Source: RMDB library M2RFPK, as collected in RNAgym. Structure probing data (2A3) for a 207-nucleotide construct. The RNA was probed in 150 mM KOAc, 10 mM MgCl2 and 150 mM bicine (pH 8.5) at 24 C.
[RMDB]
RNA sequence: GGGAACGACUCGAGUAGAGUCGAAAAGAAAGAAAGAACCCUUCCCGCGGGGCUGGAUCUUCCAGAUGGUGCGGGCCGGGACAAGCCGGAGAGUGUCCCGGUUUCAGAAACAACCUUCGGCAUCCAAACUAGACUACCCACUUCGGUGGGUAGUCAACGUUCAGUUUAUGUUCGCAUAAACUGAACGAAAAGAAACAACAACAACAAC
Reactivity to 2A3 in 0.01 (KOAc 150mM, MgCl2 10mM, bicine 150mM(pH8.5), 24C), signal-to-noise 1, nucleotides 027 to 156: g000a000a000a010g020a020a070a000g040a150a180c040c000c000u000u000c000c010c000g020c010g020g000g000g000c000u010g000g030a160u120c100u170u050c090c000a010g010a000u010g050g090u040g010c020g000g000g000c000c000g010g010g000a000c000a000a010g000c000c010g020g010a010g000a000g000u000g010u000c000c000c000g000g000u000u010u010c000a000g020a020a000a020c060a020a010c010c000u000u010c000g010g000c000a060u110c040c050a030a090a080c060u090a070g010a000c000u000a000c010c010c010a000c010u040u020c130g050g010u010g000g000g000u000a000g000u000c000a000a000